[RMDB]
RNA sequence: GGGAACGACUCGAGUAGAGUCGAAAAGAACAAAAUAUGGCUGUCAUGGUCAGCAGCCAACCGCUGAACCAAAGAUAACAAUCUAAGUCAAAAGGCAACACGCGAACGGCCAAUCGCGUGAUAGGAAAGCACUAGGUGGAUUCGUCCACCUAGUGCUAAAAGAAACAACAACAACAAC
Reactivity to 2A3 in 0.01 (KOAc 150mM, MgCl2 10mM, bicine 150mM(pH8.5), 24C), signal-to-noise 1, nucleotides 027 to 126: g130a000a000c060a030a220a080a000u200a150u150g030g020c000u000g040u130c020a090u040g000g000u000c000a000g050c000a000g000c010c000a030a060c050c000g000c050u090g090a050a100c010c050a160a180a000g070a000u160a050a050c010a040a040u030c010u270a050a030g080u000c030a000a000a000a120g150g000c040a220a000c000a000c000g000c000g060a150a000c040g110g010c000c000a000a000u000c000g000c040g030u000g000a050u090a110g090g040a240a000
Reactivity to DMS in 0.01 (KOAc 150mM, MgCl2 10mM, bicine 150mM(pH8.5), 24C), signal-to-noise 1, nucleotides 027 to 126: g020a190a180c190a030a030a000a090u060a040u060g000g010c000u000g040u030c080a040u000g000g050u000c000a300g000c000a000g020c030c070a020a130c030c020g000c050u000g010a250a060c080c020a100a290a120g010a150u040a100a050c040a000a100u000c000u020a170a050g020u000c030a010a090a080a090g000g000c040a020a100c000a000c050g000c000g000a000a010c080g060g000c000c000a000a110u000c110g000c030g020u010g010a090u010a010g000g000a010a010